[RMDB]
RNA sequence: GGGAACGACUCGAGUAGAGUCGAAAACAUGAUCAAAUGAUGAAAUAUUUUCGGAUGUAAACUCACAGACCUGUUCUGAAUGCGCAAAACCAUGUGGAUAUUUCCGUUGCCUUCCUUCUGAUUGAUCACCGUGACGACAAUUCGUUGUCGUCACGGUAAAAGAAACAACAACAACAAC
Reactivity to 2A3 in 0.01 (KOAc 150mM, MgCl2 10mM, bicine 150mM(pH8.5), 24C), signal-to-noise 3, nucleotides 027 to 126: c050a090u100g020a030u110c060a050a060a040u190g040a020u070g040a110a070a020u150a140u040u130u020u020c020g040g000a010u060g040u130a130a060a050c010u000c020a060c000a010g020a100c000c020u020g070u110u010c020u060g080a080a040u120g000c030g000c090a050a020a020a040c000c010a090u070g050u120g030g000a010u000a140u190u060u000c000c040g020u000u080g060c000c000u000u020c010c010u050u050c030u020g100a150u100u010g010a010u050c010
Reactivity to DMS in 0.01 (KOAc 150mM, MgCl2 10mM, bicine 150mM(pH8.5), 24C), signal-to-noise 1, nucleotides 027 to 126: c070a130u000g000a100u000c020a010a130a080u050g000a070u000g000a090a060a130u000a070u020u000u010u000c050g010g000a070u000g000u000a060a180a140c100u000c090a090c080a070g050a060c020c080u000g000u030u000c040u000g010a070a040u000g000c020g000c060a070a060a050a070c170c010a010u000g070u020g000g020a040u000a040u020u020u010c030c010g070u000u000g000c010c000u070u000c000c000u000u000c050u000g000a070u040u010g000a050u000c040
This 177-nucleotide RNA was probed chemically with 2A3 and DMS. DMS adducts were read by reverse transcription with MarathonRT. DMS (dimethyl sulfate) methylates the pairing face of unpaired adenines and cytosines. It was measured as part of the RMDB libraries RFM100 and RFMREP.